[RMDB]
RNA sequence: GGGAACGACUCGAGUAGAGUCGAAAAGCGAAUUCAAGGAGCCCAAGCGGGAGGCGCUGCUGACGUUGCUACCGCUGGAGCGGGCGAUGGUGCUGCGUGGCUUGUUGAGCUGGCCGGAGGACUGCGCCGUCCCCUGAUCCUUCGGGAUCAGGGGACGAAAAGAAACAACAACAACAAC
Reactivity to DMS in 0.01 (KOAc 150mM, MgCl2 10mM, bicine 150mM(pH8.5), 24C), signal-to-noise 1, nucleotides 027 to 126: g000c020g020a150a080u040u000c110a130a100g030g000a190g000c010c000c020a290a190g000c080g000g000g000a150g000g110c000g000c030u040g050c050u000g010a030c160g000u000u000g000c030u000a250c060c000g100c000u000g000g000a100g030c000g070g000g000c030g000a150u000g030g000u000g000c080u000g030c020g040u020g000g010c010u000u020g000u000u000g000a160g010c020u000g000g040c060c020g000g000a120g000g000a060c050u000g000c030g000c120
Reactivity to 2A3 in 0.01 (KOAc 150mM, MgCl2 10mM, bicine 150mM(pH8.5), 24C), signal-to-noise 2, nucleotides 027 to 126: g080c040g020a040a030u090u080c100a060a070g030g000a000g030c010c000c000a030a000g010c010g000g100g040a190g030g120c010g000c020u170g010c160u140g080a040c020g000u090u160g030c030u090a120c000c000g000c020u010g000g050a050g090c020g000g020g000c010g010a030u030g000g000u080g030c060u030g010c010g040u050g010g020c030u000u080g020u010u090g040a040g000c000u000g020g050c010c000g000g000a080g020g040a060c040u080g000c030g000c020
The record gives the reactivity of an RNA of 177 nucleotides to DMS and 2A3. Values are in units of 0.01, from 0 to 300, in steps of 10. The RNA was probed in 150 mM KOAc, 10 mM MgCl2 and 150 mM bicine (pH 8.5) at 24 C. Reactivities are given for positions 27 through 126. For DMS, 1,707 sequencing reads were counted.